[RMDB]
An RNA of 177 nucleotides, treated with 2A3 and DMS and read out base by base.
For 2A3 the reverse transcriptase was SuperScript II with manganese.
RNA sequence: GGGAACGACUCGAGUAGAGUCGAAAACGGAAAUGGCAGGACUGAAGAGGACUUGAUCAGUCACCAGAAGUUGGAGGGCAGAGAGUAGCCGUUUGCCCUAAGGAAAAAUGGCAGCAAAGGCCUGGGGCGUAAGAAAGACGUUCGCGUCUUUCUUACGAAAAGAAACAACAACAACAAC
Reactivity to 2A3 in 0.01 (KOAc 150mM, MgCl2 10mM, bicine 150mM(pH8.5), 24C), signal-to-noise 2, nucleotides 027 to 126: c040g040g030a020a090a060u110g030g000c050a050g160g040a020c010u040g010a060a020g090a050g160g040a050c070u070u120g020a070u090c030a000g020u040c000a000c020c010a040g010a170a010g060u150u080g050g010a020g020g010g000c020a000g040a030g020a010g090u110a020g040c050c020g020u050u020u070g040c030c000c000u050a090a070g050g030a010a090a020a020a110u100g030g010c010a030g000c030a080a070a000g050g000c010c000u010g000g010g020g000
Reactivity to DMS in 0.01 (KOAc 150mM, MgCl2 10mM, bicine 150mM(pH8.5), 24C), signal-to-noise 5, nucleotides 027 to 126: c060g020g000a080a090a090u000g010g030c110a100g010g010a050c020u010g020a110a130g000a130g010g010a060c100u010u000g010a090u010c110a030g000u010c030a110c030c040a060g000a100a090g020u000u010g010g010a070g010g010g020c060a050g010a050g000a120g010u000a090g020c010c030g010u000u000u010g000c100c010c040u000a060a070g020g010a020a060a030a050a050u000g000g020c020a120g000c090a030a110a100g010g020c010c020u000g010g000g000g000
The RNA was probed in 150 mM KOAc, 10 mM MgCl2 and 150 mM bicine (pH 8.5) at 24 C.